Source information
Structure probing data (2A3 and DMS) for a 207-nucleotide construct. Source: RMDB library RNAMAK, as collected in RNAgym. DMS (dimethyl sulfate) methylates the pairing face of unpaired adenines and cytosines. The 2A3 profile rests on 974 reads. The reactions ran in a buffer of 150 mM KOAc, 10 mM MgCl2 and 150 mM bicine (pH 8.5), at 24 C. The DMS profile rests on 2,431 reads.
RNA sequence: GGGAACGACUCGAGUAGAGUCGAAAAUUGGAGUUCGCUCCAAAUAUACCGUAGGUGUUAUUCCAUCUUGGAUUUAUUACCCUAAGACAGUUCGAAAGAGUCGAGGGUAAUUGUCAGAUGGAAGACACCUAAACGGGUUGAUACCCUUCGGGGUAAAGGAUCAACUUCAAUUCGUUGAAGUUGAUCCAAAAGAAACAACAACAACAAC
Reactivity to 2A3 in 0.01 (KOAc 150mM, MgCl2 10mM, bicine 150mM(pH8.5), 24C), signal-to-noise 3, nucleotides 027 to 156: u040u000g010g000a010g020u130u120c120g120c110u010c000c000a000a050a000u130a010u050a060c020c010g000u010a010g000g030u030g080u030u130a300u260u030c000c000a000u010c020u080u190g080g000a040u200u250u020a000u040u040a000c000c000c010u090a190a050g020a000c040a070g070u210u300c200g210a210a190a170g100a050g020u000c020g020a000g000g000g000u000a010a000u000u000g020u020c010a020g000a010u000g010g000a000a000g000a000c000a000c000c000u000a000a000a000c000g000g020g040u050u170g070a050u180a210c000c010c000u060u070c260g020g000g000g010u070a120a090a090
Reactivity to DMS in 0.01 (KOAc 150mM, MgCl2 10mM, bicine 150mM(pH8.5), 24C), signal-to-noise 1, nucleotides 027 to 156: u010u000g030g010a040g030u020u020c220g060c010u000c000c000a010a030a120u020a110u010a050c010c000g030u010a040g000g020u000g010u020u010a050u000u000c040c010a020u000c010u020u010g020g010a080u010u010u020a010u010u000a020c010c020c010u000a110a200g000a060c040a150g000u000u000c120g000a150a160a300g000a140g010u000c010g000a090g010g040g030u020a000a020u010u000g010u000c000a030g000a040u010g020g040a020a040g000a020c020a010c000c010u000a010a010a090c050g000g040g020u020u000g000a300u010a040c000c000c000u000u030c300g050g040g030g010u000a020a060a200